[RMDB]
RNA sequence: GGGAACGACUCGAGUAGAGUCGAAAAACGAGGUGAUGAAGUUUGAGAGGAAACUACGGAUGGCAAAGUCACUCUCGGAGCAGGAACUUGAGCUGUUUGACUGAAUGAAGUCUGGGGAGUAAUUGACCCUUCCUCGAUAUUUCGAUAUCGAGGAAGGAAAAGAAACAACAACAACAAC
Reactivity to 2A3 in 0.01 (KOAc 150mM, MgCl2 10mM, bicine 150mM(pH8.5), 24C), signal-to-noise 2, nucleotides 027 to 126: a000c030g000a010g020g020u050g010a080u040g020a100a130g040u060u070u110g080a080g010a000g000g110a120a070a020c050u120a070c000g090g060a060u050g010g010c040a030a060a060g010u020c010a020c050u090c010u000c050g010g000a000g000c010a020g010g090a070a060c030u110u110g030a040g090c030u010g050u150u140u120g060a040c010u000g030a060a190u120g040a090a000g020u000c030u070g050g000g080g000a040g030u070a080a120u080u150g050a080c020
Reactivity to DMS in 0.01 (KOAc 150mM, MgCl2 10mM, bicine 150mM(pH8.5), 24C), signal-to-noise 4, nucleotides 027 to 126: a110c050g020a050g010g020u000g010a060u000g000a170a140g010u000u010u000g000a190g000a070g010g000a120a080a090c050u000a080c080g010g000a080u000g000g010c040a040a100a150g020u000c040a100c020u010c020u000c030g020g000a080g010c070a090g010g010a070a060c080u010u010g020a070g010c060u000g000u000u000u010g000a060c030u000g010a090a070u000g000a080a060g000u000c030u000g010g000g010g000a130g010u010a040a080u010u020g000a110c140